[RMDB]
RNA sequence: GGGAACGACUCGAGUAGAGUCGAAAACCUCGAUCUCUGGCCCACUGUCCCGAUACGAUUAUUCGGGGUCAGCUGUUUGUAAGUCCCGUAUUCAACUUGUGCCGCACAGGGCAGGUUGAGGGCCAGAUUUAACCACAGGAUUCGUCCUGUGGUUAAAAAAAGAAACAACAACAACAAC
Reactivity to DMS in 0.01 (KOAc 150mM, MgCl2 10mM, bicine 150mM(pH8.5), 24C), signal-to-noise 7, nucleotides 027 to 126: c030c040u000c130g000a110u020c100u000c000u000g010g010c000c010c000a300c030u000g010u000c000c000c000g010a020u000a090c300g010a200u030u020a110u010u010c010g000g010g000g010u030c020a020g000c160u000g000u000u010u010g010u010a080a120g010u010c020c010c020g010u030a060u020u010c010a000a010c000u000u000g020u000g000c010c000g000c260a110c240a170g000g000g000c000a000g000g000u000u000g000a030g010g000g000c000c010a000g000a060
Reactivity to 2A3 in 0.01 (KOAc 150mM, MgCl2 10mM, bicine 150mM(pH8.5), 24C), signal-to-noise 7, nucleotides 027 to 126: c000c000u020c030g120a130u020c010u000c000u050g000g000c020c000c000a030c010u010g020u020c000c010c010g020a010u040a100c080g100a150u140u150a130u110u140c000g000g000g020g030u040c010a000g000c030u070g080u120u190u140g170u130a090a080g070u070c000c010c020g030u080a130u060u020c010a010a010c020u030u020g020u110g300c000c010g130c030a160c070a160g000g000g010c000a000g010g000u000u010g020a060g000g000g000c000c000a000g000a000